[RMDB]
An RNA of 170 nucleotides, treated with 2A3 and DMS and read out base by base. The DMS profile rests on 12,100 reads. For 2A3 the reverse transcriptase was SuperScript II with manganese. DMS adducts were read by reverse transcription with MarathonRT. High DMS reactivity at an A or C suggests that its Watson-Crick edge is free.

RNA sequence: GGGAACGACUCGAGUAGAGUCGAAAACCAUGGGAUCGGUGCCGAGUGAGGCUUAUCCCGGGGGUGACGCCUCGGUCCUCCCUUAGCAUCGGAGACCCGGGCCCCCUCCCAGGAAAGGGAACAGGGGAAACCGGCUAGUUCGCUAGCCGGAAAAGAAACAACAACAACAAC
Reactivity to 2A3 in 0.01 (KOAc 150mM, MgCl2 10mM, bicine 150mM(pH8.5), 24C), signal-to-noise 5, nucleotides 027 to 129: c000c000a100u100g000g000g000a010u050c000g000g000u010g000c000c010g000a000g000u020g010a020g010g020c100u110u120a130u150c020c000c010g020g000g000g000g000u110g050a040c080g150c020c000u000c000g010g010u050c000c000u000c020c020c000u010u000a000g000c000a010u020c000g040g000a030g080a080c010c000c000g020g060g010c010c000c000c000c000u030c020c000c020a070g150g170a130a120a110g040g020g000a000a040c100a080g000g000g030g000a000a020a030
Reactivity to DMS in 0.01 (KOAc 150mM, MgCl2 10mM, bicine 150mM(pH8.5), 24C), signal-to-noise 8, nucleotides 027 to 129: c020c010a130u070g020g040g010a180u010c000g070g040u040g000c010c030g010a010g020u030g010a040g030g040c300u040u020a050u050c230c000c020g000g080g000g010g000u000g030a170c300g050c020c040u020c080g000g000u060c000c020u030c000c090c030u070u030a110g030c080a050u010c080g070g000a040g030a110c000c000c000g030g020g020c040c010c000c000c060u040c010c000c070a150g070g070a050a150a130g030g010g000a080a010c140a010g020g010g010g080a060a040a090